[RMDB]
RNA sequence: GGGAACGACUCGAGUAGAGUCGAAAAUACUGAGUUCCAUAUCCAUCAGAAAGAUAUUGAAUAUAUGCUUCGCAAAAUGCCUCAAAAUUCGAAUCCUGUAGCAAGUAAGAAUCAGGCAUCAUUGUGCCAAUCAAUGGUCUUAAAUCAGGGUCAGCUAAGACGAAGUAUAGUUCGCUAUACUUCGUCUAAAAGAAACAACAACAACAAC
Reactivity to DMS in 0.01 (KOAc 150mM, MgCl2 10mM, bicine 150mM(pH8.5), 24C), signal-to-noise 2, nucleotides 027 to 156: u000a110c020u010g010a210g030u000u010c020c040a050u000a070u000c000c010a140u020c210a250g010a230a120a090g000a060u000a070u010u010g000a060a070u000a140u000a080u000g000c010u010u000c060g030c040a030a060a070a020u000g000c000c020u020c070a030a080a120a150u020u010c090g000a060a150u000c030c020u000g030u010a080g000c050a070a100g000u000a100a120g040a050a040u000c070a060g010g040c020a020u000c060a120u000u000g000u000g030c070c070a070a080u000c080a040a080u000g010g020u000c050u000u000a020a070a110u000c030a040g020g040g030u010c060a080g020c060u000a110
Reactivity to 2A3 in 0.01 (KOAc 150mM, MgCl2 10mM, bicine 150mM(pH8.5), 24C), signal-to-noise 4, nucleotides 027 to 156: u150a010c050u060g030a010g030u040u000c010c000a000u000a020u000c010c020a050u050c050a100g180a110a140a010g020a020u030a030u060u040g010a060a000u080a010u010a020u160g030c030u060u090c010g000c040a000a110a070a050u090g020c010c000u040c040a110a100a080a160u090u050c020g040a060a050u040c020c010u040g020u070a010g030c060a090a050g050u070a060a030g030a060a030u050c040a030g010g010c010a010u030c010a030u020u150g040u060g050c030c020a020a040u090c020a020a070u070g040g050u050c010u040u140a100a100a070u080c040a030g000g010g020u040c010a020g050c010u090a040
Chemical mapping of a 207-nucleotide RNA with DMS and 2A3. For 2A3, 2,879 sequencing reads were counted. For DMS the reverse transcriptase was MarathonRT.